Source: RMDB library OK2TST, as collected in RNAgym. This 177-nucleotide RNA was probed chemically with DMS and 2A3. The 2A3 profile rests on 994 reads. The RNA was probed in 150 mM KOAc, 10 mM MgCl2 and 150 mM bicine (pH 8.5) at 24 C.

RNA sequence: GGGAACGACUCGAGUAGAGUCGAAAAGGCGUUCGGCAGCGAAUUGCCGUCCGAGUCCGAGGAGCCUUUAGGCCUUGAAGAGGAUGAUCCCGACGCGGUGGAUACGGAUUCUAUGCCGGCUCUGUCAAUAAUGGUGGUCAUUCGUGACCACCAUUAUAAAAGAAACAACAACAACAAC
Reactivity to DMS in 0.01 (KOAc 150mM, MgCl2 10mM, bicine 150mM(pH8.5), 24C), signal-to-noise 3, nucleotides 027 to 126: g000g000c040g020u010u010c020g010g000c070a070g020c130g020a090a050u000u000g030c030c020g020u020c010c020g000a150g020u010c050c040g020a230g030g000a170g020c020c000u010u010u000a180g020g010c080c070u000u010g010a090a140g000a080g000g010a130u010g000a120u000c000c020c040g000a100c100g010c070g000g000u000g010g000a090u010a060c070g010g000a100u000u000c120u000a140u010g010c010c020g000g000c090u000c010u020g040u010c080a100
Reactivity to 2A3 in 0.01 (KOAc 150mM, MgCl2 10mM, bicine 150mM(pH8.5), 24C), signal-to-noise 1, nucleotides 027 to 126: g010g000c020g060u090u030c050g060g080c030a000g010c030g100a080a150u130u230g100c000c010g030u010c010c030g030a060g040u030c060c040g030a090g020g030a050g000c030c000u030u040u090a120g010g020c000c080u110u080g080a070a040g000a010g110g000a010u110g020a060u050c020c050c000g000a050c070g010c040g010g010u100g040g100a030u060a110c000g040g000a000u150u010c060u120a040u180g000c000c040g050g000c060u000c020u080g100u070c020a000